[RMDB]
RNA sequence: GGGAACGACUCGAGUAGAGUCGAAAAGAUAUGGACAGAACCCUCCGAAGAACAGGCUUCGACAGGAUUGAGAUUCGGAAACGAAUCUCUCGAUUCGAAGCCUGGGAGGAGGUUCUGUCCUAAGUCAGCAUAAAUAUGACUUCGGUCAUAUUUAUGCAAAAGAAACAACAACAACAAC
Reactivity to 2A3 in 0.01 (KOAc 150mM, MgCl2 10mM, bicine 150mM(pH8.5), 24C), signal-to-noise 1, nucleotides 027 to 126: g010a000u030a000u120g000g000a000c010a010g000a040a020c170c060c100u030c010c030g300a300a000g000a010a010c020a030g010g010c030u030u010c000g190a120c220a230g100g220a270u140u190g010a000g000a000u040u010c000g000g030a000a020a050c010g000a010a000u010c000u000c000u020c050g230a300u200u090c000g030a010a000g000c050c000u000g000g000g000a000g010g000a000g000g000u000u030c000u000g000u010c010c000u010a010a000g000u020c030a000
Reactivity to DMS in 0.01 (KOAc 150mM, MgCl2 10mM, bicine 150mM(pH8.5), 24C), signal-to-noise 2, nucleotides 027 to 126: g000a020u010a090u010g000g040a060c000a000g010a020a040c140c040c030u010c000c010g010a160a160g000a240a260c020a020g000g010c010u000u000c010g000a050c300a140g010g010a090u010u000g000a020g010a050u010u000c000g020g000a020a020a080c020g010a020a010u000c000u000c020u010c030g030a220u000u000c000g010a030a000g010c010c000u000g010g010g000a000g000g010a000g000g000u010u010c000u000g000u000c000c010u000a000a070g000u000c020a150

Overview: This 177-nucleotide RNA was probed chemically with 2A3 and DMS. Source: RMDB library TTRINS, as collected in RNAgym. Conditions: 150 mM KOAc, 10 mM MgCl2 and 150 mM bicine (pH 8.5), 24 C.